[RMDB]
RNA sequence: GGGAACGACUCGAGUAGAGUCGAAAAGUGUGGGAUAGACGGGACUAGUCUUGGCCGUCGUCUUCCAAGACGAUGCUAAAGGAGUCGUGGUGCAUACGGUGGUUCCAUGGAGGAACGGUACGUGGUGCGAGGCUUAAAGAUUCGUCUUUAAGCCUCGAAAAGAAACAACAACAACAAC
Reactivity to DMS in 0.01 (KOAc 150mM, MgCl2 10mM, bicine 150mM(pH8.5), 24C), signal-to-noise 5, nucleotides 027 to 126: g010u010g010u010g010g000g010a090u000a080g000a050c070g020g000g010a070c040u000a080g010u010c050u000u000g000g010c050c080g030u010c000g010u000c020u000u010c240c250a090a070g000a040c000g000a020u000g000c030u000a010a060a060g000g000a040g000u000c020g010u000g000g020u000g010c050a060u010a050c060g000g000u000g010g010u000u000c020c020a120u000g010g010a150g000g000a030a030c040g030g000u000a060c040g020u000g000g010u000g000
Reactivity to 2A3 in 0.01 (KOAc 150mM, MgCl2 10mM, bicine 150mM(pH8.5), 24C), signal-to-noise 2, nucleotides 027 to 126: g030u040g020u030g010g020g020a050u020a080g060a020c000g010g010g020a030c020u020a010g020u000c000u010u040g040g000c020c010g000u000c000g030u000c000u160u020c030c000a000a000g010a000c020g010a010u020g000c000u070a060a020a020g040g010a020g000u010c020g040u010g000g010u030g000c010a020u050a020c000g020g020u040g020g000u010u000c010c010a050u080g150g050a110g020g010a020a000c010g000g000u050a010c010g000u000g000g020u010g010
Record summary: An RNA of 177 nucleotides, treated with DMS and 2A3 and read out base by base. It was measured as part of the RMDB library OK2TRN. The RNA was probed in 150 mM KOAc, 10 mM MgCl2 and 150 mM bicine (pH 8.5) at 24 C. Reactivities are given for positions 27 through 126. The 2A3 profile rests on 3,094 reads.